[RMDB]
RNA sequence: GGGAACGACUCGAGUAGAGUCGAAAAAUUGGAAUCAGUGACAGUGCUCUUUUUGUUAAAGGAUUGAGUUUGGGGAGCCUUAAUUCCUAACAAAGCAUUUGGACACUACCUUCUGCUUUAACUAAAAUGAUAAUUAUGUUCAUUGGUAGGUUCCUCCAGACUUACAGCAGUUCGCUGCUGUAAGUCUAAAAGAAACAACAACAACAAC
Reactivity to 2A3 in 0.01 (KOAc 150mM, MgCl2 10mM, bicine 150mM(pH8.5), 24C), signal-to-noise 1, nucleotides 027 to 156: a010u080u040g060g010a070a010u110c030a080g050u020g070a040c000a030g010u030g040c010u010c050u080u150u050u100u060g100u090u170a150a150a000g000g010a050u040u040g000a010g040u020u050u260g080g000g000g000a030g020c000c000u020u010a010a010u110u000c000c000u050a060a040c090a100a030a000g000c000a020u120u150u120g020g000a040c020a020c160u100a090c010c000u020u000c010u020g020c000u090u030u030a060a010c020u060a080a020a060a080u050g020a020u030a180a050u190u110a060u140g030u030u040c040a020u050u030g020g000u050a040g000g050u010u000c000c000u000c000c010